The data come from the RNA Mapping Database (RMDB), library OK3TST. Structure probing data (2A3) for a 207-nucleotide construct. Values cover nucleotides 27 to 156.
[RMDB]
RNA sequence: GGGAACGACUCGAGUAGAGUCGAAAACUGGCCUGUGUGGAAGUAGGUGACUACUUCACUCUCUACGGGAGUAGAGACACACAGAUCGUGGAGCGAUGUCUUGGAACUACUCCCGUAGUUCACGUAUGACUCACGUCAUACCAAGACGCCAGCCACGAGGUAAAUGCGAUUUCGAUCGCAUUUACCUAAAAGAAACAACAACAACAAC
Reactivity to 2A3 in 0.01 (KOAc 150mM, MgCl2 10mM, bicine 150mM(pH8.5), 24C), signal-to-noise 2, nucleotides 027 to 156: c010u010g010g000c030c040u090g000u010g030u060g120g030a000a010g000u000a010g010g080u140g120a100c010u000a010c000u000u010c010a050c010u010c000u000c000u000a000c000g080g000g000a020g000u000a010g020a010g050a020c020a000c000a000c000a040g010a020u070c050g040u090g120g150a110g090c020g030a040u010g000u030c000u020u040g040g020a070a040c000u010a000c000u000c030c060c020g010u000a000g000u060u070c060a040c050g010u000a000u040g020a010c070u130c150a070c140g000u010c000a000u010a010c010c000a000a040g040a040c030g000c000c000a000g020c000c000a070c040g130
As a SHAPE reagent, 2A3 marks flexible, mostly unpaired nucleotides at the ribose 2'-OH.